[RMDB]
RNA sequence: GGGAACGACUCGAGUAGAGUCGAAAACUUGAUUCGUCAAGGGACUGGCGUACUACGGUCCUGGCUAUAAUCUACCACUACCCACCAGAGUCCCAAAUAGGACUCUGAGGUGGUAGGUAGCCAAGGACCGUAUCGCAAGAUGCGUGUUCGCACGCAAGUAGUGCCAUACAUUCGUGUAUGGCACUACAAAAGAAACAACAACAACAAC
Reactivity to 2A3 in 0.01 (KOAc 150mM, MgCl2 10mM, bicine 150mM(pH8.5), 24C), signal-to-noise 4, nucleotides 027 to 156: c010u010u020g010a010u040u120c200g080u040c130a020a030g010g010g050a070c090u050g050g000c040g040u140a130c050u000a000c060g010g010u000c000c000u000g010g010c010u000a010u050a160a170u070c000u000a000c000c000a000c010u090a090c020c060c110a020c010c010a000g000a000g000u010c000c010c030a170a300a100u300a090g000g000a010c000u000c000u000g010a010g020g000u000g000g000u000a000g000g000u000a000g000c010c000a010a000g000g000a000c020c000g000u000a000u020c000g010c010a000a050g100a070u090g000c020g000u020g060u080u070c280g020c100a010c000g040c010a040a010
Reactivity to DMS in 0.01 (KOAc 150mM, MgCl2 10mM, bicine 150mM(pH8.5), 24C), signal-to-noise 2, nucleotides 027 to 156: c030u000u010g020a050u000u010c230g010u000c010a040a050g000g010g040a140c060u030g040g040c010g040u000a070c070u000a010c020g010g020u000c000c000u000g010g000c000u000a050u000a170a110u000c000u010a020c010c030a030c000u000a040c010c010c030a300c110c000a020g000a030g010u000c000c000c030a010a160a200u000a050g000g010a020c000u000c000u000g000a010g020g000u010g010g000u000a000g020g040u000a030g010c000c000a010a120g010g000a020c000c000g000u000a000u000c000g020c020a040a080g010a160u000g020c040g000u000g020u000u030c260g000c040a030c000g010c000a030a120